[RMDB]
RNA sequence: GGGAACGACUCGAGUAGAGUCGAAAAAUGGUACAGAAAAUAUCGACAUCGCGCAGGUGGCCUUUGAAAUGAAUCAUAACGACAGGUUCUCAUUUUCACUAAGUAACCUCUGAGAAGUUGACUAUCGCCACUUACUCUCGACACUCGUCCGAUAGCGCGUACCACCUUGAUUCGUCAAGGUGGUACGAAAAGAAACAACAACAACAAC
Reactivity to 2A3 in 0.01 (KOAc 150mM, MgCl2 10mM, bicine 150mM(pH8.5), 24C), signal-to-noise 4, nucleotides 027 to 156: a000u140g010g010u180a090c070a070g210a110a080a030a020u070a050u100c020g010a020c030a110u050c040g010c030g030c110a020g040g050u040g050g000c010c030u120u050u130g080a080a070a030u070g050a030a030u060c050a070u170a220a120c120g110a030c050a080g030g030u070u010c040u010c050a090u040u060u090u110c070a060c050u080a070a030g050u040a080a110c040c010u050c050u090g060a040g030a220a040g040u060u100g010a050c010u030a080u130c030g000c020c020a000c030u030u020a090c010u010c000u000c030g010a030c020a030c050u050c020g080u000c020c030g050a080u080a040g060c080g000
Reactivity to DMS in 0.01 (KOAc 150mM, MgCl2 10mM, bicine 150mM(pH8.5), 24C), signal-to-noise 2, nucleotides 027 to 156: a100u000g010g020u000a160c060a090g020a140a070a110a160u000a070u000c000g000a060c040a080u000c020g050c140g060c060a070g050g020u000g010g040c010c060u000u020u010g000a080a120a060u000g020a070a120u000c070a070u020a070a090c100g000a080c080a090g000g010u010u000c050u010c030a140u000u000u000u000c070a100c120u000a010a080g000u010a040a050c030c020u000c040u010g010a110g000a060a130g040u000u000g000a080c070u000a070u000c050g010c020c020a030c040u000u000a080c040u000c010u000c000g010a060c060a030c080u000c070g010u000c020c010g000a110u010a030g010c060g020

Description: The record gives the reactivity of an RNA of 207 nucleotides to 2A3 and DMS. 2A3 adducts were read by reverse transcription with SuperScript II with manganese. DMS adducts were read by reverse transcription with MarathonRT. The DMS profile rests on 2,604 reads. The reactions ran in a buffer of 150 mM KOAc, 10 mM MgCl2 and 150 mM bicine (pH 8.5), at 24 C.